[RMDB]
RNA sequence: GGGAACGACUCGAGUAGAGUCGAAAAGGCUAACUAUGCAAGCAUAAACAAGGCAUGAGGUAUAUGAUUUUAUGGAGAUCUUUUGGUCCGAUAGGGGAUUGGCAAGACUGAGUCAGAAUACCAACCCUAGUUAGAUGGUAUUCGUACCAUCUAACUAAAAAGAAACAACAACAACAAC
Reactivity to DMS in 0.01 (KOAc 150mM, MgCl2 10mM, bicine 150mM(pH8.5), 24C), signal-to-noise 9, nucleotides 027 to 126: g010g010c040u000a070a100c130u000a060u000g010c060a080a080g010c040a050u000a060a080a090c130a070a090g000g000c040a040u000g000a080g020g010u000a040u000a070u010g000a060u000u000u000u010a090u010g010g000a090g000a060u000c020u000u000u000u000g010g010u000c020c020g010a110u010a100g010g010g000g010a090u000u010g010g010c100a050a070g000a060c060u000g000a070g010u000c020a050g010a090a100u000a070c040c030a030a100c020c010c020
Reactivity to 2A3 in 0.01 (KOAc 150mM, MgCl2 10mM, bicine 150mM(pH8.5), 24C), signal-to-noise 8, nucleotides 027 to 126: g040g000c020u030a060a020c020u020a050u130g020c060a090a080g000c010a060u090a080a160a030c040a050a080g040g010c020a020u060g040a030g060g070u030a080u020a020u110g060a060u040u070u040u130a140u170g100g030a090g010a100u010c000u010u130u080u110g030g000u000c020c010g010a030u110a080g120g030g010g010a040u020u070g040g000c030a020a030g020a030c030u040g000a000g030u020c010a010g050a120a030u040a060c000c010a010a050c010c010c000